Chemical mapping of a 177-nucleotide RNA with 2A3 and DMS. For DMS the reverse transcriptase was MarathonRT. Conditions: 150 mM KOAc, 10 mM MgCl2 and 150 mM bicine (pH 8.5), 24 C. 2A3 adducts were read by reverse transcription with SuperScript II with manganese. Values cover nucleotides 27 to 126.
RNA sequence: GGGAACGACUCGAGUAGAGUCGAAAACAAACCGUGCAAAAUUGUCCAAUGCGGUCUACCGUCAGAAUUUCGGGCGGAAAUACGACAUUAUACAGAAAGCCGGCCGCAAUGUCGUAUAGCACGGAAACAUGAGCAUACUCUUCGGAGUAUGCUCAUGAAAAGAAACAACAACAACAAC
Reactivity to 2A3 in 0.01 (KOAc 150mM, MgCl2 10mM, bicine 150mM(pH8.5), 24C), signal-to-noise 6, nucleotides 027 to 126: c050a000a050a010c000c000g000u010g010c010a020a030a070a220u170u130g020u010c020c040a060a100u140g020c030g010g010u000c010u050a070c000c020g020u040c010a030g080a240a150u110u140u170c060g020g000g000c000g030g010a020a060a010u060a020c010g030a000c010a020u060u130a130u160a150c100a080g150a080a090a000g140c090c070g010g010c000c010g000c000a010a010u030g000u000c010g000u010a000u020a010g000c000a000c000g000g000a020a000a000
Reactivity to DMS in 0.01 (KOAc 150mM, MgCl2 10mM, bicine 150mM(pH8.5), 24C), signal-to-noise 3, nucleotides 027 to 126: c100a130a100a110c000c020g010u000g000c030a070a010a060a050u040u070g010u000c000c050a090a110u030g000c030g000g010u010c030u000a250c020c000g020u000c050a000g040a080a110u000u040u000c070g000g040g000c010g000g000a030a060a030u000a060c020g000a020c000a020u030u030a110u070a160c220a180g000a120a120a170g020c050c070g000g000c010c030g040c010a010a010u000g020u000c030g000u000a010u000a130g020c020a030c020g000g000a020a070a230